[RMDB]
RNA sequence: GGGAACGACUCGAGUAGAGUCGAAAAGUUAAGAGACAUCGCAAGACCUUCAAAACGAACUAUGCGAGUAGUUCACAGCUAAGUCUGUAUGGAUAUGCUGAAACGCGACGAGAUGGGCUGAUAGAGAACCUUCUGGCAUGUUCGCAUGCCAGAAGGUAAAAGAAACAACAACAACAAC
Reactivity to DMS in 0.01 (KOAc 150mM, MgCl2 10mM, bicine 150mM(pH8.5), 24C), signal-to-noise 2, nucleotides 027 to 126: g020u000u000a100a040g000a010g020a050c090a140u000c000g000c040a100a030g000a070c060c010u000u000c090a220a060a100a130c190g000a020a050c070u000a000u010g000c090g020a100g000u000a070g060u000u000c020a220c010a020g000c010u000a080a100g000u010c000u000g030u030a050u050g070g010a020u010a300u040g000c010u000g000a100a050a090c240g020c040g000a020c130g000a070g010a030u030g020g010g030c020u000g020a140u050a070g000a120g030a140
Reactivity to 2A3 in 0.01 (KOAc 150mM, MgCl2 10mM, bicine 150mM(pH8.5), 24C), signal-to-noise 2, nucleotides 027 to 126: g020u060u060a100a030g030a000g000a020c050a060u030c030g020c030a000a060g010a150c000c020u000u000c040a040a040a000a040c110g000a030a010c000u050a060u040g050c000g050a020g020u010a020g000u010u000c020a000c000a090g040c000u000a050a000g040u010c020u030g160u140a120u230g070g000a040u090a000u090g000c030u000g000a050a040a000c070g000c020g060a000c020g010a000g010a130u070g080g010g080c010u010g050a130u070a060g050a000g000a060